[RMDB]
RNA sequence: GGGAACGACUCGAGUAGAGUCGAAAAUGGCUUUGGAUUUCCUCCCAGGUGUAGAAUCAAUCUCCAUGUCCUCUCGCCUGGGCCUCUUCGCCGGGGGUCCUCCCUCUUCGUCCUUCUUCUUUCUCAAUCACUCUCACGUUCGCGUGAGAGAAAAGAAACAACAACAACAAC
Reactivity to 2A3 in 0.01 (KOAc 150mM, MgCl2 10mM, bicine 150mM(pH8.5), 24C), signal-to-noise 7, nucleotides 027 to 129: u130g040g010c020u130u040u090g040g020a040u060u070u030c010c010u050c000c010c000a000g000g010u040g030u120a020g030a030a040u080c030a030a110u040c070u050c150c060a080u120g030u010c010c010u010c010u010c000g010c010c000u010g000g000g010c000c000u020c000u040u040c030g040c020c020g020g000g000g000g000u010c000c000u010c000c000c000u000c000u030u020c020g040u010c000c000u020u050c000u030u010c000u020u050u000c020u010c000a090a100u120c030a050
Reactivity to DMS in 0.01 (KOAc 150mM, MgCl2 10mM, bicine 150mM(pH8.5), 24C), signal-to-noise 4, nucleotides 027 to 129: u060g000g030c080u090u050u070g060g020a140u050u050u030c010c010u030c030c010c000a040g000g000u010g010u000a070g000a060a070u000c080a030a040u030c020u040c130c100a120u060g040u030c150c040u000c030u010c040g000c010c030u000g010g010g010c100c020u020c040u030u050c020g040c000c060g000g000g000g000g000u030c000c000u000c030c050c010u030c040u020u020c040g020u040c000c050u040u050c030u030u030c040u010u040u020c000u000c030a080a090u060c170a160
The record gives the reactivity of an RNA of 170 nucleotides to 2A3 and DMS. For DMS, 22,396 sequencing reads were counted. 2A3 adducts were read by reverse transcription with SuperScript II with manganese. The RNA was probed in 150 mM KOAc, 10 mM MgCl2 and 150 mM bicine (pH 8.5) at 24 C. For DMS the reverse transcriptase was MarathonRT.